[RMDB]
RNA sequence: GGGAACGACUCGAGUAGAGUCGAAAAUCCAUUUUCUCUCGUUGGAUAUUCUCCUCGGAGAAGGGAGAUGGGGCCAGUCCCAGUUGGUUCGCUCUCGUAGUCACAGCCACUGGGGAACCUAGGCAGAUGGCUGGACGGAGUCUUAGUCCACUCCAGACAUAAAGAACUGCUUCGGCAGUUCUUUAUGAAAAGAAACAACAACAACAAC
Reactivity to DMS in 0.01 (KOAc 150mM, MgCl2 10mM, bicine 150mM(pH8.5), 24C), signal-to-noise 1, nucleotides 027 to 156: u000c030c010a150u000u010u000u010c010u000c030u010c060g000u000u000g000g010a140u000a130u010u030c050u000c000c010u010c100g010g000a170g000a120a060g000g050g010a040g020a060u030g040g030g050g040c030c090a140g000u000c000c000c010a120g000u000u020g100g020u000u000c180g000c010u000c060u000c100g040u010a040g010u000c050a120c070a240g000c000c000a090c020u000g000g030g010g090a060a070c110c040u000a120g030g020c020a160g010a210u010g010g010c060u000g030g010a150c140g000g000a110g050u000c060u010u000a200g030u010c040c010a110c080u000c010c030a070g000a300
Reactivity to 2A3 in 0.01 (KOAc 150mM, MgCl2 10mM, bicine 150mM(pH8.5), 24C), signal-to-noise 1, nucleotides 027 to 156: u010c020c000a010u150u110u060u000c030u030c010u000c020g150u050u060g040g000a060u030a220u300u030c070u010c070c000u030c060g090g040a050g010a010a040g070g020g010a080g010a010u110g000g040g050g020c010c020a000g020u060c030c010c000a010g070u140u150g000g030u060u010c000g010c000u010c030u040c070g170u290a050g020u040c040a020c010a100g000c020c000a000c000u000g010g050g000g010a000a030c000c010u000a130g000g030c040a000g100a160u100g010g000c030u030g010g030a040c050g100g010a070g050u040c080u150u140a030g070u030c020c000a020c010u010c010c000a000g000a120